[RMDB]
RNA sequence: GGGAACGACUCGAGUAGAGUCGAAAAAGAUGUGCGUCAUGUUGCCUGCCUUUUUUAUUGGUUGCCGGCGUCUGCCUGGGGAAGGCAGACGCCUACGAACAUGCGACCACUGUGCCAAAUGUACCGGCGUUUUGAAACAGUUCGCUGUUUCAAAACGAAAAGAAACAACAACAACAAC
Reactivity to DMS in 0.01 (KOAc 150mM, MgCl2 10mM, bicine 150mM(pH8.5), 24C), signal-to-noise 2, nucleotides 027 to 126: a090g000a090u000g010u010g020c070g030u000c010a040u000g010u000u010g010c040c020u010g000c040c010u000u000u020u010u040u000a060u010u010g010g020u010u000g020c110c190g020g020c020g040u010c010u000g010c000c010u000g000g010g000g000a250a030g000g000c000a030g020a000c020g020c010c010u000a020c140g000a040a050c090a080u000g020c020g010a060c050c050a040c090u010g020u010g020c050c080a060a090a080u010g010u010a160c060c080g000g010